About this RNA:
Conditions: 150 mM KOAc, 10 mM MgCl2 and 150 mM bicine (pH 8.5), 24 C. Chemical mapping of a 177-nucleotide RNA with 2A3 and DMS. For DMS the reverse transcriptase was MarathonRT. It was measured as part of the RMDB library OK1LIB. 2A3 adducts were read by reverse transcription with SuperScript II with manganese.

[RMDB]
RNA sequence: GGGAACGACUCGAGUAGAGUCGAAAACAACAAUGAGCGGGCUCGUCCGGCGUCGGGUAUCAGUUCGUUUUUGAAUACCUUCGGAAUUAGGCAAAAUAGCCAGACAGCUUCUUCUUCUGCGGCUCCAGGAUAUAUACCACUUCGGUGGUAUAUAUCCAAAAGAAACAACAACAACAAC
Reactivity to 2A3 in 0.01 (KOAc 150mM, MgCl2 10mM, bicine 150mM(pH8.5), 24C), signal-to-noise 9, nucleotides 027 to 126: c030a030a000c030a030a130u140g010a030g040c030g010g040g010c020u020c070g060u040c030c030g040g010c040g060u080c020g010g000g000u050a080u120c020a050g040u080u070c060g050u100u060u010u060u090g070a090a030u080a100c010c000u050u080c040g050g040a110a120u120u080a140g050g000c020a040a040a050a220u130a080g010c020c000a010g040a060c020a020g010c000u040u020c000u080u010c000u050u010c010u090g030c010g040g000c000u020c030c010a020
Reactivity to DMS in 0.01 (KOAc 150mM, MgCl2 10mM, bicine 150mM(pH8.5), 24C), signal-to-noise 4, nucleotides 027 to 126: c090a060a110c180a060a050u010g000a050g020c130g000g000g010c020u020c090g010u000c020c040g000g040c080g010u020c020g000g000g020u000a030u030c050a040g010u010u010c110g020u010u000u010u010u000g020a130a050u010a050c060c000u000u040c070g000g010a050a070u030u020a060g010g000c080a060a070a100a140u050a140g020c010c040a080g020a100c100a050g000c030u020u020c030u000u000c050u010u000c020u000g010c070g010g000c030u020c020c030a090